The data come from the RNA Mapping Database (RMDB), library RNAMAK. An RNA of 207 nucleotides, treated with 2A3 and DMS and read out base by base. The reactions ran in a buffer of 150 mM KOAc, 10 mM MgCl2 and 150 mM bicine (pH 8.5), at 24 C.

RNA sequence: GGGAACGACUCGAGUAGAGUCGAAAAGCGUACUACUUUGCUUUUGACGGUUUAGUCCUACCCACCGAUAUCCCAAAUAGGAUAUCGAGGGAUGGAAACCGAUAAGCAAAGUAUCGCAAAAUCCAAGAUCGUCGACUUCGGUCGACGAUCUUGGAAACACAUCUUACUCGUUCGCGAGUAAGAUGUGAAAAGAAACAACAACAACAAC
Reactivity to 2A3 in 0.01 (KOAc 150mM, MgCl2 10mM, bicine 150mM(pH8.5), 24C), signal-to-noise 4, nucleotides 027 to 156: g000c010g050u110a080c030u000a000c000u040u010u010g010c020u050u050u110u220g210a110c060g000g050u030u040u190a150g060u080c040c010u040a170c030c010c000a100c140c000g000a000u000a000u040c010c020c030a220a300a150u300a160g000g000a000u000a000u000c000g000a060g010g000g000a010u050g010g000a030a000a010c010c000g040a040u010a060a000g000c000a010a000a010g040u020a040u090c010g000c000a050a110a000a120u000c000c000a000a000g000a000u000c000g010u000c000g010a020c000u080u080c290g130g000u000c000g000a000c000g000a000u000c000u000u000g000g000a000a000a000
Reactivity to DMS in 0.01 (KOAc 150mM, MgCl2 10mM, bicine 150mM(pH8.5), 24C), signal-to-noise 1, nucleotides 027 to 156: g030c000g000u000a050c060u000a000c000u000u010u000g010c010u020u000u010u020g010a240c040g040g000u010u010u000a240g030u000c000c010u000a080c020c010c040a300c110c010g000a020u000a020u000c000c000c000a070a160a300u000a080g020g000a010u010a000u000c010g010a060g020g010g000a060u000g000g000a070a080a040c000c000g030a150u000a050a040g010c000a040a020a010g000u000a010u000c010g000c010a100a100a050a070u000c000c000a000a000g000a010u010c060g030u000c010g020a060c020u010u000c230g030g000u010c020g020a020c030g000a000u000c000u000u000g020g000a000a040a070